RNA sequence: GGGAACGACUCGAGUAGAGUCGAAAAUACGACGUAUUCGUACGUCGUAAAGGUACGAAAGUACAAAGGAGCAAAAGGAUGAGCUCCUAAAAAUCAUGCAAAACACGAGCCGAUUCGUCGGCUCGAAGAGAGAUGCAGAAUUCGUUCUGCAUCUCUCAAAAGAAACAACAACAACAAC
Reactivity to 2A3 in 0.01 (KOAc 150mM, MgCl2 10mM, bicine 150mM(pH8.5), 24C), signal-to-noise 2, nucleotides 027 to 126: u050a000c020g020a000c010g010u000a010u000u060c180g010u060a000c000g010u000c000g000u010a030a000a000g110g000u020a000c010g040a100a000a000g000u000a010c020a030a180a000g000g000a010g000c030a000a110a120a100g160g010a180u080g050a020g000c000u000c020c000u030a040a010a000a000a000u150c100a060u180g140c050a070a050a040a020c080a080c040g000a000g020c020c020g060a020u070u060c110g040u010c000g070g000c000u000c010g010a010a000
Reactivity to DMS in 0.01 (KOAc 150mM, MgCl2 10mM, bicine 150mM(pH8.5), 24C), signal-to-noise 2, nucleotides 027 to 126: u000a000c000g000a000c000g030u000a010u010u000c180g020u010a000c040g000u030c000g000u010a000a080a030g020g000u020a000c010g000a150a070a210g000u010a000c010a080a180a100g020g030a000g030c000a090a080a090a110g000g010a110u000g000a170g010c020u000c000c010u030a000a040a000a020a000u000c140a080u000g000c140a020a140a080a090c180a210c010g000a000g000c010c000g010a030u000u010c120g000u000c040g000g010c000u010c000g000a020a090